[RMDB]
RNA sequence: GGGAACGACUCGAGUAGAGUCGAAAAAUACAAGGGGAGGUUUCGGCCAAAUGUAGUAUGCAGAAAGCGUGAGGAAGGUAGCACUUAGACACUCACGAGUAGCGGUUCGGCAGUAGUGCUAAAAUGAGACAGUACGAAAAGUUCGCUUUUCGUACAACCAUGUUUGAUACUUCGGUAUCAAACAUGGAAAAGAAACAACAACAACAAC
Reactivity to 2A3 in 0.01 (KOAc 150mM, MgCl2 10mM, bicine 150mM(pH8.5), 24C), signal-to-noise 4, nucleotides 027 to 156: a000u120a030c040a050a030g000g020g010g010a050g010g030u000u030u070c020g030g000c020c000a020a030a050u050g010u010a030g010u020a030u080g020c020a010g100a100a070a030g090c020g010u020g020a010g050g040a090a050g070g010u050a020g000c020a020c080u060u070a050g020a070c040a010c050u030c000a030c030g020a050g020u090a020g040c050g030g040u100u080c080g020g000c020a030g010u060a010g020u020g030c000u020a030a010a010a070u110g010a020g030a050c060a100g000u000a000c000g010a000a000a000a000g020u040u060c130g010c150u000u000u010u000c000g000u000a000c000a000a000
Reactivity to DMS in 0.01 (KOAc 150mM, MgCl2 10mM, bicine 150mM(pH8.5), 24C), signal-to-noise 2, nucleotides 027 to 156: a110u000a050c040a040a040g020g010g030g010a140g020g010u000u000u000c040g020g000c020c030a050a070a090u000g040u000a040g000u000a010u010g000c010a070g000a060a080a150g010c020g020u000g000a070g030g020a080a080g020g020u010a070g040c060a110c110u020u000a080g020a100c050a080c040u000c010a050c050g000a110g040u010a050g000c090g010g010u000u000c040g030g000c020a040g030u000a020g010u000g030c030u000a010a010a050a090u010g000a150g010a080c040a070g000u000a020c010g000a000a010a000a040g030u000u000c300g030c010u000u000u000u000c020g010u000a010c020a050a140
Notes
This 207-nucleotide RNA was probed chemically with 2A3 and DMS. For DMS, 3,350 sequencing reads were counted. Conditions: 150 mM KOAc, 10 mM MgCl2 and 150 mM bicine (pH 8.5), 24 C.